The record gives the reactivity of an RNA of 207 nucleotides to 2A3. The reactions ran in a buffer of 150 mM KOAc, 10 mM MgCl2 and 150 mM bicine (pH 8.5), at 24 C.
[RMDB]
RNA sequence: GGGAACGACUCGAGUAGAGUCGAAAAAAACUUUUGUGACUUGCUGAAUCGGGACUAAUCUCCUCACCGAGGCUAAGCAAGUAAAAUACGCCUCUCAUAUCCUUACCUGAGGGUGGUAAGGAAAUAACCUGCAACGCUUCCUUCGGGAAGCGUUGAAUACUACUUCGAUGUUCGCAUCGAAGUAGUAAAAAGAAACAACAACAACAAC
Reactivity to 2A3 in 0.01 (KOAc 150mM, MgCl2 10mM, bicine 150mM(pH8.5), 24C), signal-to-noise 1, nucleotides 027 to 156: a000a000a000c190u270u190u020u140g060u040g050a000c000u010u010g010c000u010g010a040a040u010c020g000g010g010a020c010u010a030a140u050c080u030c040c010u000c060a110c020c010g000a000g000g040c040u020a060a000g010c000a010a000g040u050a000a000a000a130u100a060c090g050c000c000u020c010u060c030a010u070a180u130c000c000u000u010a010c010c010u090g060a040g010g210g000u020g000g000u000a020a000g000g040a000a060a000u050a000a060c020c060u090g000c000a000a000c010g000c000u000u010c000c040u050u120c160g020g030g000a000a000g000c000g000u000u000g000a000a000